An RNA of 177 nucleotides, treated with 2A3 and read out base by base.

RNA sequence: GGGAACGACUCGAGUAGAGUCGAAAAUUAAAAACAUUUUUUUCUUCCUCUGUAAUUUUGCCUUGAAAAUCAAGGACACUUUUUUGUUUUCUUCAUCCAAAGACCUCCAGAAACUCUCCUCCCCACCGAUAAUUUUGACUUUCGAGUCAAAAUUAUCAAAAGAAACAACAACAACAAC
Reactivity to 2A3 in 0.01 (KOAc 150mM, MgCl2 10mM, bicine 150mM(pH8.5), 24C), signal-to-noise 3, nucleotides 027 to 126: u100u030a060a040a030a080a020c060a080u150u100u000u010u020u080u060c020u040u010c010c000u050c090u090g070u120a110a220u050u160u130u200g010c000c010u020u000g090a140a120a070a160u160c010a000a000g010g060a040c000a030c050u120u140u070u010u110u080g040u090u060u030u030c010u040u040c010a100u000c020c010a080a040a100g080a210c010c000u000c010c000a030g040a060a050a070c030u010c000u000c010c020u000c030c000c000c010a020c000c020

The reactions ran in a buffer of 150 mM KOAc, 10 mM MgCl2 and 150 mM bicine (pH 8.5), at 24 C.
For 2A3 the reverse transcriptase was SuperScript II with manganese.